[RMDB]
RNA sequence: GGGAACGACUCGAGUAGAGUCGAAAAUUGAAGCAUGGUUCUCCAGGUCCUGGAGGCUGGAAUUACCUUUUAUUUUCUCAAACACAAGUUCUGUCAUUUUUCUCCCUCAUACUGUCAUUGUUUCUAUCUUUUUAUUCCCUCCUCCUCCCAACCUCACCCAAUUAUCUAUGUUCGCAUAGAUAAUUGGAAAAGAAACAACAACAACAAC
Reactivity to DMS in 0.01 (KOAc 150mM, MgCl2 10mM, bicine 150mM(pH8.5), 24C), signal-to-noise 1, nucleotides 027 to 156: u010u000g010a130a210g030c050a040u010g010g020u000u010c020u000c010c000a070g040g020u010c050c000u000g000g010a030g010g020c080u000g040g010a100a030u000u000a060c030c030u000u000u010u000a030u020u020u000u010c050u000c050a140a070a100c070a090c040a050a070g010u000u030c030u000g010u050c030a130u000u000u000u000u020c030u000c030c000c000u010c040a110u010a060c070u000g020u020c030a150u000u000g010u000u000u010c030u000a130u000c010u020u000u000u000u010a140u080u000c020c020c010u020c050c030u000c020c000u000c030c010c000a060a120c090c010u000c060a160c260
Reactivity to 2A3 in 0.01 (KOAc 150mM, MgCl2 10mM, bicine 150mM(pH8.5), 24C), signal-to-noise 4, nucleotides 027 to 156: u070u050g050a080a010g010c020a020u070g010g010u020u050c000u010c020c020a020g040g050u040c040c020u010g020g010a020g040g000c040u030g010g030a060a070u110u060a100c020c000u070u080u050u050a130u060u110u110u000c060u020c030a120a160a030c040a010c030a090a100g050u110u030c030u050g060u040c060a150u020u050u040u110u040c030u060c030c020c000u050c010a050u070a120c030u030g030u040c020a060u060u060g040u050u080u010c030u040a120u050c030u030u130u030u040u090a100u100u050c000c010c000u010c010c010u010c000c000u010c010c000c000a010a020c010c030u060c010a030c020